RNA sequence: GGGAACGACUCGAGUAGAGUCGAAAACAGGAGGCAGCCAAGCCUGCCUGGAGCAGGAUAAGAUGAGCUCCCCUCUGAGACUCAGUAUUUUCUGUUCAAUGAAAGGAACAGUCCAGUAUUUGAGACACUGACACGGAAAGUUCGCUUUCCGUGUCAGAAAAGAAACAACAACAACAAC
Reactivity to DMS in 0.01 (KOAc 150mM, MgCl2 10mM, bicine 150mM(pH8.5), 24C), signal-to-noise 2, nucleotides 027 to 126: c070a060g010g000a080g010g020c280a090g020c070c150a060a240g000c020c000u000g000c010c010u020g000g000a140g000c010a040g000g000a080u010a050a080g000a200u000g000a140g000c010u000c080c020c040c050u000c030u000g000a210g000a100c000u010c020a030g000u000a030u010u000u000u010c010u000g010u000u000c060a090a100u030g010a110a060a120g010g000a060a080c070a100g020u000c080c070a030g030u000a020u000u010u000g000a090g020a180c120a150
Reactivity to 2A3 in 0.01 (KOAc 150mM, MgCl2 10mM, bicine 150mM(pH8.5), 24C), signal-to-noise 1, nucleotides 027 to 126: c030a010g030g000a000g030g000c010a030g090c060c060a040a020g010c010c000u050g120c010c030u110g140g030a060g000c020a000g070g100a030u140a300a160g110a130u100g010a000g070c000u060c050c040c020c010u000c000u000g110a140g010a030c000u000c000a040g030u010a010u020u040u020u000c000u000g060u050u040c050a130a080u300g110a080a040a020g100g000a000a000c000a000g000u030c000c000a010g020u020a070u030u150u080g080a030g010a000c030a030